[RMDB]
The record gives the reactivity of an RNA of 207 nucleotides to 2A3. For 2A3, 1,059 sequencing reads were counted. The data come from the RNA Mapping Database (RMDB), library OK3TST. For 2A3 the reverse transcriptase was SuperScript II with manganese.
RNA sequence: GGGAACGACUCGAGUAGAGUCGAAAAGGCGCGGGCCGCGGCCGUGUCCUGGCCCUCGAACAGCGGCCACGCGGAGAUGUCGGUGGGCGGCUCGUCAAAGACGGCCAUCGACACGAUAGACUCGAGGGCCAGGGCGGCGUCUCCGGCCAUGACGGAGCCGAAUACAUUAGUUCGCUAAUGUAUUCGGAAAAGAAACAACAACAACAAC
Reactivity to 2A3 in 0.01 (KOAc 150mM, MgCl2 10mM, bicine 150mM(pH8.5), 24C), signal-to-noise 1, nucleotides 027 to 156: g040g020c050g010c000g000g030g000c010c000g020c000g110g000c010c030g110u090g020u050c000c000u010g000g000c010c070c030u000c020g130a170a130c060a140g000c040g050g000c100c000a040c010g030c000g030g000a090g010a050u040g000u000c030g010g020u020g010g010g090c000g000g040c070u040c080g210u150c070a180a130a030g000a000c010g040g070c000c000a000u010c020g000a020c000a000c000g010a040u110a030g090a040c020u010c020g010a000g000g010g000c000c000a000g000g000g000c020g030g020c020g010u020c010u000c000c000g020g000c010c020a060u090g040a040c040g000g010a010g010